An RNA of 177 nucleotides, treated with DMS and read out base by base. Values cover nucleotides 27 to 126. The data come from the RNA Mapping Database (RMDB), library TTRINS. For DMS, 843 sequencing reads were counted.

[RMDB]
RNA sequence: GGGAACGACUCGAGUAGAGUCGAAAAGAUAUGGAACAAAAAAGAUGGUAGAGGGUGAACUACUAGGGUUCUCGGAAACGAGAAUGCUAGCACCUACCCACCUACCAUCUUUUUUGUUCCUAAGUCACGAAACGGAUAAGUUCGCUUAUCCGUUUCGAAAAGAAACAACAACAACAAC
Reactivity to DMS in 0.01 (KOAc 150mM, MgCl2 10mM, bicine 150mM(pH8.5), 24C), signal-to-noise 1, nucleotides 027 to 126: g020a100u020a300u010g000g020a010a010c000a000a030a010a010a010a000g000a010u000g020g020u020a000g020a290g000g010g040u000g010a110a060c200u000a150c000u000a000g030g000g000u000u000c010u000c000g000g020a080a110a200c020g010a000g060a010a000u000g040c000u000a000g040c060a010c110c030u000a060c000c030c010a250c150c010u000a010c010c000a000u000c000u000u000u000u000u000u000g000u000u000c000c020u010a020a060g000u000c050a300